This 177-nucleotide RNA was probed chemically with DMS and 2A3. The RNA was probed in 150 mM KOAc, 10 mM MgCl2 and 150 mM bicine (pH 8.5) at 24 C. The data come from the RNA Mapping Database (RMDB), library RFMREP. For 2A3 the reverse transcriptase was SuperScript II with manganese. For DMS the reverse transcriptase was MarathonRT. For DMS, 4,257 sequencing reads were counted.
RNA sequence: GGGAACGACUCGAGUAGAGUCGAAAAACACUGGAACUAGUACUCUGGUCAAUGCGGAUUGCCUGUGGCGGUGUUGGCUGGACGACCGAGUGUCGGCGGAUACCUCCGGGCAGCUUGUCUGCUUGCAGUCAUUAUGAUUCUUCGGAAUCAUAAUGACAAAAGAAACAACAACAACAAC
Reactivity to DMS in 0.01 (KOAc 150mM, MgCl2 10mM, bicine 150mM(pH8.5), 24C), signal-to-noise 4, nucleotides 027 to 126: a090c070a040c030u000g000g000a070a090c070u000a070g020u000a110c190u010c030u010g000g000u000c050a040a030u010g020c030g020g010a040u000u000g020c000c010u010g010u000g030g020c110g020g010u000g000u000u000g000g010c020u000g010g010a090c030g010a080c220c110g020a110g010u000g010u000c050g010g000c020g000g000a060u000a030c030c020u000c030c040g000g000g000c010a020g010c170u010u010g010u010c010u000g020c020u000u000g010c150a120
Reactivity to 2A3 in 0.01 (KOAc 150mM, MgCl2 10mM, bicine 150mM(pH8.5), 24C), signal-to-noise 4, nucleotides 027 to 126: a000c060a010c020u050g050g020a050a010c020u030a040g060u110a060c020u010c030u090g030g030u070c040a050a060u130g010c010g050g050a090u130u090g010c000c010u150g040u190g090g000c050g000g020u020g020u040u020g150g010c040u090g100g040a030c000g060a060c000c100g140a120g040u170g040u050c010g020g000c000g020g010a030u030a050c010c000u000c010c000g000g010g010c000a000g010c020u110u230g020u050c010u010g020c000u020u050g030c020a020